This 177-nucleotide RNA was probed chemically with 2A3 and DMS. The RNA was probed in 150 mM KOAc, 10 mM MgCl2 and 150 mM bicine (pH 8.5) at 24 C. Reactivities are given for positions 27 through 126. Source: RMDB libraries RFM100 and RFMREP, as collected in RNAgym. DMS (dimethyl sulfate) methylates the pairing face of unpaired adenines and cytosines. DMS adducts were read by reverse transcription with MarathonRT.
RNA sequence: GGGAACGACUCGAGUAGAGUCGAAAAUGGUUCUGUUUUUCGCAGGGUUUGGAUUCUUUAUCUGGAAAGACGCGAAUAAGCGCAAGAAGCCUUAAGUCUUUCCAGGGCAACGAGCACGCAAGGCAUUUCCUUAGGUAUAGUUCGCUAUACCUAAGGAAAAAGAAACAACAACAACAAC
Reactivity to 2A3 in 0.01 (KOAc 150mM, MgCl2 10mM, bicine 150mM(pH8.5), 24C), signal-to-noise 3, nucleotides 027 to 126: u220g030g000u110u010c040u020g070u010u010u000u050u120c050g030c040a020g050g000g000u030u060u120g100g000a030u060u000c010u020u110u120a120u030c000u000g000g000a000a000a000g000a000c000g020c020g070a100a070u140a050a010g030c030g000c130a080a100g100a140a020g130c010c000u000u010a060a000g000u000c000u000u000u000c000c000a000g000g000g000c010a040a030c070g000a010g040c040a020c050g060c060a050a060g140g000c080a050u000u000
Reactivity to DMS in 0.01 (KOAc 150mM, MgCl2 10mM, bicine 150mM(pH8.5), 24C), signal-to-noise 4, nucleotides 027 to 126: u010g010g020u000u030c010u000g000u000u000u010u040u040c070g000c000a050g000g000g000u020u010u000g020g010a100u000u000c040u020u010u000a080u040c010u000g010g010a010a010a000g000a020c010g020c190g010a090a110u020a030a020g020c140g020c040a110a110g020a180a200g000c020c010u010u000a020a150g000u000c000u000u010u000c000c000a010g000g000g000c120a050a080c070g010a070g010c060a060c080g000c090a070a060g000g020c100a210u010u000